[RMDB]
RNA sequence: GGGAACGACUCGAGUAGAGUCGAAAAUACGAAUGAUAUGGAGUGCCAGCUAACUGCCUCUUGGAUUUAGACUCGGAAACGAGUCUUGUCAGAGGCUGUUAGCGGUAAACUCCUAAGUCUGCCAUAAGUUAUAUUGUCCCUUCGGGGACAAUAUAACAAAAGAAACAACAACAACAAC
Reactivity to 2A3 in 0.01 (KOAc 150mM, MgCl2 10mM, bicine 150mM(pH8.5), 24C), signal-to-noise 2, nucleotides 027 to 126: u270a040c040g060a090a140u140g010a010u030a030u230g000g000a010g000u070g140c040c030a080g040c070u000a000a010c000u030g020c000c000u000c020u050u160g150g020a060u300u300u200a010g020a000c000u000c020g030g020a060a070a080c010g000a000g000u010c000u000u000g000u000c000a000g020a000g000g000c000u010g000u020u000a000g020c000g000g000u000a000a000a000c000u000c000c000u030a050a030g000u000c030u030g090c070c010a170u070a240a070
Reactivity to DMS in 0.01 (KOAc 150mM, MgCl2 10mM, bicine 150mM(pH8.5), 24C), signal-to-noise 3, nucleotides 027 to 126: u010a090c200g010a130a070u000g010a020u010a300u010g010g000a000g050u000g000c030c000a150g040c010u000a000a010c010u000g000c000c000u000c000u000u010g030g020a020u010u010u000a010g010a000c000u000c000g000g000a090a080a150c010g010a010g010u000c000u000u000g020u000c000a020g000a020g000g010c010u000g000u000u000a010g010c000g000g030u000a030a060a060c020u010c000c000u000a040a090g010u000c020u000g020c090c020a100u010a080a140